[RMDB]
RNA sequence: GGGAACGACUCGAGUAGAGUCGAAAAUCGCGGUUGGCCCUACUAAUCGGCAUCGCACCCCGCCGGACCUCCCCCCAUCAACGGCUGUCACAGUCUGGGGCGGGAGUCCGUGGGCGUCUGGAUGUCCCCGAUUUCAUGAGUUCGCUCAUGAAAUCGGAAAAGAAACAACAACAACAAC
Reactivity to DMS in 0.01 (KOAc 150mM, MgCl2 10mM, bicine 150mM(pH8.5), 24C), signal-to-noise 2, nucleotides 027 to 126: u020c050g070c110g000g000u000u000g000g000c140c030c070u030a170c190u030a120a000u000c160g000g020c000a080u000c000g010c220a080c050c000c000c000g010c020c000g000g000a000c000c010u000c000c000c000c000c020c000a180u000c200a110a010c120g000g000c000u000g000u110c210a090c050a020g120u000c050u000g030g020g000g000c240g050g000g000a090g000u010c000c000g020u050g000g000g000c130g030u050c070u010g000g000a060u010g010u000c000c070
Reactivity to 2A3 in 0.01 (KOAc 150mM, MgCl2 10mM, bicine 150mM(pH8.5), 24C), signal-to-noise 1, nucleotides 027 to 126: u150c000g000c000g070g000u120u140g110g040c010c000c000u150a080c000u040a080a300u110c010g000g000c000a010u030c000g090c010a030c050c030c000c000g000c000c080g000g000a000c050c120u020c020c000c040c000c000c090a000u190c000a170a000c100g000g050c090u190g170u300c150a130c030a150g000u030c020u000g000g010g010g000c130g000g040g000a040g000u000c000c020g000u070g000g000g010c090g030u000c020u040g060g050a030u050g000u060c030c000